[RMDB]
Chemical mapping of a 177-nucleotide RNA with DMS and 2A3.
2A3 is a SHAPE reagent: it acylates the 2'-hydroxyl of flexible nucleotides of all four kinds.
For DMS, 3,501 sequencing reads were counted.
It was measured as part of the RMDB library OK2TST.
The 2A3 profile rests on 2,245 reads.
RNA sequence: GGGAACGACUCGAGUAGAGUCGAAAACUACUCCCGCCGAUCGACGAGUAGGCAAGGAAGCCGCCUUACAGGAUAGUAAUACCAUGGUUGCAUCGGGGCUCUAUACUAGCGGGGCUUCGGGGCUAUCUCGGUAACACUUAUUCGUAAGUGUUACCGAAAAAGAAACAACAACAACAAC
Reactivity to DMS in 0.01 (KOAc 150mM, MgCl2 10mM, bicine 150mM(pH8.5), 24C), signal-to-noise 4, nucleotides 027 to 126: c080u010a100c140u000c010c010c010g020c090c060g010a060u000c040g010a080c100g010a100g030u000a080g000g000c090a090a080g000g000a110a100g020c040c050g010c030c020u000u020a160c100a050g000g010a050u000a030g000u000a090a120u000a090c040c010a080u010g010g030u000u000g010c050a030u000c050g000g000g000g000c020u000c010u000a100u010a080c150u010a060g010c260g000g000g000g000c010u010u000c010g000g010g000g000c080u000a050u000c070
Reactivity to 2A3 in 0.01 (KOAc 150mM, MgCl2 10mM, bicine 150mM(pH8.5), 24C), signal-to-noise 1, nucleotides 027 to 126: c010u050a020c040u010c010c030c020g000c010c030g070a140u100c070g100a080c020g000a040g060u060a020g080g000c040a030a010g090g000a080a010g040c010c010g070c020c050u060u090a050c040a030g000g040a050u060a020g080u060a090a070u040a130c000c030a030u060g070g000u070u110g050c010a020u060c000g010g000g020g010c000u000c010u080a170u070a160c070u110a040g160c070g030g000g020g050c000u020u020c020g010g000g020g000c020u050a020u090c040